Chemical mapping of a 177-nucleotide RNA with 2A3 and DMS.
[RMDB]
RNA sequence: GGGAACGACUCGAGUAGAGUCGAAAAAUUGUGAAAAGACAUAGAGGGUGUAGCAUAAGUGGGAGCGAAAGCGCCAGUGAAAUACCACUACCUUUAUCGUCUUUUUACUUAUUCAAUGAAGCGAAGCACCUCCAAUAGUAUUCGUACUAUUGGAGGUAAAAGAAACAACAACAACAAC
Reactivity to 2A3 in 0.01 (KOAc 150mM, MgCl2 10mM, bicine 150mM(pH8.5), 24C), signal-to-noise 8, nucleotides 027 to 126: a000u080u070g010u000g000a000a000a000a000g000a000c000a000u010a000g020a000g010g030g010u170g010u070a020g030c170a020u010a040a000g010u000g000g020g000a140g010c000g040a090a020a010g010c000g000c000c000a000g010u020g020a020a020a000u020a010c000c000a000c000u000a010c000c010u000u010u000a010u020c030g000u000c000u000u000u000u000u000a000c000u010u030a040u010u050c020a020a100u160g140a120a020g090c090g090a070a020g070c050
Reactivity to DMS in 0.01 (KOAc 150mM, MgCl2 10mM, bicine 150mM(pH8.5), 24C), signal-to-noise 8, nucleotides 027 to 126: a070u020u010g010u000g000a010a010a010a010g010a020c010a020u000a010g010a010g010g000g000u010g000u000a010g000c150a020u000a000a040g010u000g000g000g000a010g020c000g010a090a080a100g020c010g040c270c300a150g000u000g010a020a010a070u000a040c010c000a010c010u000a040c000c010u000u000u000a000u000c180g010u000c000u000u000u000u000u000a020c000u010u010a050u010u000c090a080a090u020g010a100a110g010c120g000a080a140g020c210
Values are in units of 0.01, from 0 to 300, in steps of 10. For 2A3 the reverse transcriptase was SuperScript II with manganese.